[RMDB]
Record summary
Chemical mapping of a 177-nucleotide RNA with 2A3 and DMS. The 2A3 profile rests on 2,834 reads. Reactivities are given for positions 27 through 126.
RNA sequence: GGGAACGACUCGAGUAGAGUCGAAAAAGAGCCAAGGCUGCAUGGUCGGGAAUCUGGGCAUAGAAUUUACUCGAUUAUCCGAUGACGAACUGGAAGCUACGAUGCCGGUAGAUAAUCGUACAACUCAUCCUAUCAUGACAUUCGUGUCAUGAUAGGAAAAAGAAACAACAACAACAAC
Reactivity to 2A3 in 0.01 (KOAc 150mM, MgCl2 10mM, bicine 150mM(pH8.5), 24C), signal-to-noise 2, nucleotides 027 to 126: a000g080a000g000c010c010a030a030g070g030c020u040g030c040a090u080g130g000u040c000g000g020g000a040a010u020c070u110g030g010g030c020a030u070a100g140a070a050u100u090u050a050c020u010c000g030a010u000u040a050u120c040c000g030a030u070g050a040c050g040a100a040c050u040g040g010a020a020g040c050u050a040c060g050a020u100g090c020c010g000g050u030a030g000a050u120a050a060u070c040g000u080a030c020a050a040c050u030c080a090
Reactivity to DMS in 0.01 (KOAc 150mM, MgCl2 10mM, bicine 150mM(pH8.5), 24C), signal-to-noise 5, nucleotides 027 to 126: a050g000a120g010c030c020a120a100g000g010c040u000g020c080a070u010g000g020u000c040g010g000g010a050a050u000c040u010g010g000g020c040a040u010a100g000a090a080u000u010u010a070c060u000c010g010a020u000u000a060u000c020c020g010a070u010g020a120c110g020a060a090c060u000g000g010a100a080g010c080u000a040c060g010a050u000g010c050c020g000g000u000a070g010a060u000a060a030u000c040g010u000a030c130a070a100c090u000c070a180
2A3 adducts were read by reverse transcription with SuperScript II with manganese. The data come from the RNA Mapping Database (RMDB), library OK2TRN.